[RMDB]
RNA sequence: GGGAACGACUCGAGUAGAGUCGAAAAUCGGGAGCAUUGGGUUUGGAGGAUAGUGAUUGAGUUGAGGGUUUUGCCGAUGCUAUCGGGGGUUUGAAAGCAUUCCAAACUCGGGCGUACCCUCGAUUUAGUAUAUUAAUUUAUUCGUAAAUUAAUAUACAAAAGAAACAACAACAACAAC
Reactivity to DMS in 0.01 (KOAc 150mM, MgCl2 10mM, bicine 150mM(pH8.5), 24C), signal-to-noise 2, nucleotides 027 to 126: u010c050g010g010g010a050g040c090a020u030u020g010g010g010u010u010u010g000g000a060g010g000a080u030a000g020u010g010a060u030u000g000a080g030u010u010g000a020g000g000g010u010u030u020u030g010c010c020g030a070u020g020c050u010a030u020c070g000g010g000g010g020u000u010u010g010a090a050a090g020c060a090u020u020c040c040a030a040a030c030u010c030g010g010g000c050g030u010a030c020c000c010u000c020g000a020u000u000u010a130
Reactivity to 2A3 in 0.01 (KOAc 150mM, MgCl2 10mM, bicine 150mM(pH8.5), 24C), signal-to-noise 2, nucleotides 027 to 126: u090c010g020g030g010a060g030c060a070u060u160g060g020g000u130u040u100g030g020a070g010g030a060u030a000g130u090g080a160u090u120g050a040g030u030u080g050a050g000g030g020u060u090u100u140g000c000c020g000a030u070g020c020u060a050u040c010g060g010g040g000g010u000u030u070g080a050a040a010g040c030a060u050u020c030c010a030a010a060c010u010c000g010g020g000c010g000u010a000c000c000c000u000c000g010a000u010u000u000a000